[RMDB]
RNA sequence: GGGAACGACUCGAGUAGAGUCGAAAACAAUCUAUGAGUGUCGGAGAAGGGUUUUGAGAAUGUAGCAAUUUUUAUUAAUUGUGUUAUAGCUUGAGACUUGGAUACGAUGCUUUGGAUUGAGGAACGCAAUCAAUCUGGAGUUCGCUCCAGAUUGAUUAAAAGAAACAACAACAACAAC
Reactivity to 2A3 in 0.01 (KOAc 150mM, MgCl2 10mM, bicine 150mM(pH8.5), 24C), signal-to-noise 6, nucleotides 027 to 126: c010a010a000u000c000u020a130u200g040a000g000u020g010u010c010g000g020a140g010a130a010g000g010g000u000u000u000u000g010a020g010a070a080u090g010u030a000g000c010a010a010u010u020u000u070u110a290u160u230a050a000u010u010g010u000g060u100u080a100u070a070g020c000u000u010g010a000g000a000c000u010u010g000g010a030u040a060c000g000a000u010g000c000u020u010u010g020g000a000u010u000g000a020g010g090a080a020c090g010c170
Reactivity to DMS in 0.01 (KOAc 150mM, MgCl2 10mM, bicine 150mM(pH8.5), 24C), signal-to-noise 4, nucleotides 027 to 126: c010a010a000u000c010u000a000u070g000a010g010u000g010u000c010g010g010a010g010a300a220g000g000g000u010u000u000u000g000a010g020a030a070u020g010u000a290g020c000a030a010u000u000u010u020u060a060u050u000a020a000u000u010g000u000g000u030u000a020u010a050g010c000u000u000g000a000g010a000c000u000u000g010g010a260u020a000c000g010a010u000g020c000u000u020u010g000g000a010u000u000g000a100g000g000a130a120c110g010c190

Structure probing data (2A3 and DMS) for a 177-nucleotide construct. Source: RMDB libraries RFM100 and RFMREP, as collected in RNAgym. For 2A3 the reverse transcriptase was SuperScript II with manganese. Reactivities are rounded to 0.1 and cut off at 0 and 3.